The record gives the reactivity of an RNA of 207 nucleotides to 2A3. Source: RMDB library ARCHII, as collected in RNAgym. Conditions: 150 mM KOAc, 10 mM MgCl2 and 150 mM bicine (pH 8.5), 24 C.
[RMDB]
RNA sequence: GGGAACGACUCGAGUAGAGUCGAAAAAGACCUAUUUUGCGACUCAUCUAGCGGAUGUAAAACGCCAGUUAAAUAUAACUGCAAAAAAUACAAAUUCUUACGCAGUAGCUGCCUAAAAACCAGCCUGUGUGAUCAAUAACAAAUUGCUUGUGUUUGUUCACAUAACUUUGUUCGCAAAGUUAUGUGAAAAAGAAACAACAACAACAAC
Reactivity to 2A3 in 0.01 (KOAc 150mM, MgCl2 10mM, bicine 150mM(pH8.5), 24C), signal-to-noise 2, nucleotides 027 to 156: a000g160a100c010c000u040a140u050u110u080u110g030c030g050a070c070u040c110a000u040c030u020a040g010c050g120g000a040u070g040u300a030a030a030a080c010g010c050c000a000g010u030u100a060a300a100u280a200u070a140a050c020u050g020c070a030a000a000a120a000a000u100a070c050a030a180a050u250u040c050u040u060a000c020g000c000a000g000u060a020g000c000u000g000c000c000u080a070a080a020a010a020c020c000a000g010c000c000u000g000u000g000u000g010a020u080c100a100a090u260a100a060c020a060a120a120u210u070g060c140u020u060g000u000g050u040u020u030g020u000